[RMDB]
RNA sequence: GGGAACGACUCGAGUAGAGUCGAAAACAAACGAAUAAACAAUUUCACAAAUGGAUGUUAAUGUGUUAGUGGGAAAUUUCUUGACGCUAGUGGAAUUGAAAAUUCUAACGGAUGAUGUUCUACCUAUUUCAUCCGAUAACAUGUUAAUUUCCGAUACGAUACCCUGUGCUUUCGAGCACAGGGUAUCAAAAGAAACAACAACAACAAC
Reactivity to 2A3 in 0.01 (KOAc 150mM, MgCl2 10mM, bicine 150mM(pH8.5), 24C), signal-to-noise 2, nucleotides 027 to 156: c040a010a100a000c050g110a040a060u170a190a100a040c110a060a120u170u200u140c060a060c040a050a060a090u190g050g010a010u030g040u020u020a030a030u020g020u000g000u020u000a020g030u110g030g010g070a000a070a040u080u120u000c040u110u100g040a020c040g080c100u050a070g000u040g050g060a020a010u020u010g010a000a060a050a040u000u000c000u020a030a030c000g000g040a000u010g000a000u010g020u150u020c060u120a200c040c000u000a060u030u030u000c000a000u030c000c000g020a010u030a020a010c010a000u010g020u000u010a030a000u020u010u000c000c010g010a030u030a160c120
Overview
The data come from the RNA Mapping Database (RMDB), library OK3TST. This 207-nucleotide RNA was probed chemically with 2A3. Values cover nucleotides 27 to 156. The RNA was probed in 150 mM KOAc, 10 mM MgCl2 and 150 mM bicine (pH 8.5) at 24 C.